[RMDB]
RNA sequence: GGGAACGACUCGAGUAGAGUCGAAAAGAUUCAGACAGCGAUUCAGAUUCGGAUAGCGACUCAGAUUCAGAUAGCGAUUCGGACUCAGACAACGACUCAGAUUCUGACAGCGAUUCAGACUCAGAUAGCACGUGCGAGAAUUCGUUCUCGCACGUGCAAAAGAAACAACAACAACAAC
Reactivity to 2A3 in 0.01 (KOAc 150mM, MgCl2 10mM, bicine 150mM(pH8.5), 24C), signal-to-noise 2, nucleotides 027 to 126: g000a000u090u060c000a100g050a060c020a030g070c010g070a110u150u100c000a020g130a140u000u110c010g000g000a000u040a040g000c010g000a020c080u040c040a060g000a290u240u090c030a020g000a060u150a010g000c000g000a000u020u020c020g000g000a040c040u000c060a000g110a040c070a000a070c050g220a070c000u000c040a190g050a110u090u020c000u060g000a000c080a110g050c050g060a050u000u000c000a000g000a030c040u000c040a000g000a140u110a100